[RMDB]
RNA sequence: GGGAACGACUCGAGUAGAGUCGAAAAGAUAUGGAAUGCAUCGAUCAUGAAGAGCGAUGAAAAAGCGAAAGAGAUCGGAAACGAUCUCUUUCGCUUUGGAGCUCGGCAUGGGAGCAUUCCUAAGUCACUCUAGUAUGUAGUUCGCUACAUACUAGAGAAAAGAAACAACAACAACAAC
Reactivity to DMS in 0.01 (KOAc 150mM, MgCl2 10mM, bicine 150mM(pH8.5), 24C), signal-to-noise 2, nucleotides 027 to 126: g000a060u000a300u020g000g000a020a010u000g000c000a270u000c100g010a160u010c000a020u000g000a050a050g010a020g020c000g000a170u020g010a090a090a000a010a010g020c000g000a010a010a020g020a030g010a030u000c000g040g010a080a070a260c010g000a000u000c000u000c000u000u000u000c000g020c000u000u000u010g010g010a170g020c000u000c000g020g040c010a000u000g010g000g000a050g010c010a010u000u020c000c000u010a020a080g010u010c030a200
Source: RMDB library TTRINS, as collected in RNAgym. An RNA of 177 nucleotides, treated with DMS and read out base by base. For DMS the reverse transcriptase was MarathonRT. Conditions: 150 mM KOAc, 10 mM MgCl2 and 150 mM bicine (pH 8.5), 24 C.